[RMDB]
An RNA of 177 nucleotides, treated with DMS and 2A3 and read out base by base.
For DMS the reverse transcriptase was MarathonRT.
For 2A3 the reverse transcriptase was SuperScript II with manganese.
For 2A3, 1,669 sequencing reads were counted.
RNA sequence: GGGAACGACUCGAGUAGAGUCGAAAAGAUAUGGAGUCUCUUGAAUAGCCAAUGACGUCGGAAACGAUAAGACAGGCUAUCAAGAGGACUCCUAAGUCAAAGAGCAGUGUCUUCGGACACUGCUCAACGUAUACGCUCCGUUCGCGGAGCGUAUACGAAAAGAAACAACAACAACAAC
Reactivity to DMS in 0.01 (KOAc 150mM, MgCl2 10mM, bicine 150mM(pH8.5), 24C), signal-to-noise 2, nucleotides 027 to 126: g010a070u000a300u000g030g010a000g020u000c000u000c000u000u010g000a060a010u000a010g000c000c000a150a090u010g000a100c300g000u000c000g000g000a120a180a140c000g000a000u000a090a140g010a130c110a080g000g000c010u000a000u000c000a010a030g000a040g010g000a000c000u000c020c000u000a050a090g000u010c050a070a080a160g020a010g010c000a010g020u000g000u010c000u000u030c130g060g030a030c000a000c010u000g010c010u000c010a010a030
Reactivity to 2A3 in 0.01 (KOAc 150mM, MgCl2 10mM, bicine 150mM(pH8.5), 24C), signal-to-noise 1, nucleotides 027 to 126: g050a040u090a050u120g020g000a010g000u000c020u010c000u000u050g130a300a150u020a000g000c000c020a110a180u170g050a060c100g020u000c000g040g050a070a120a100c030g030a010u020a220a000g170a030c090a060g000g000c010u000a000u010c000a020a000g010a080g030g020a000c000u000c000c000u010a110a030g020u000c040a180a140a060g000a010g000c000a000g000u060g030u010c000u040u140c300g060g000a000c030a000c000u000g000c000u000c000a000a000

For DMS, 1,081 sequencing reads were counted.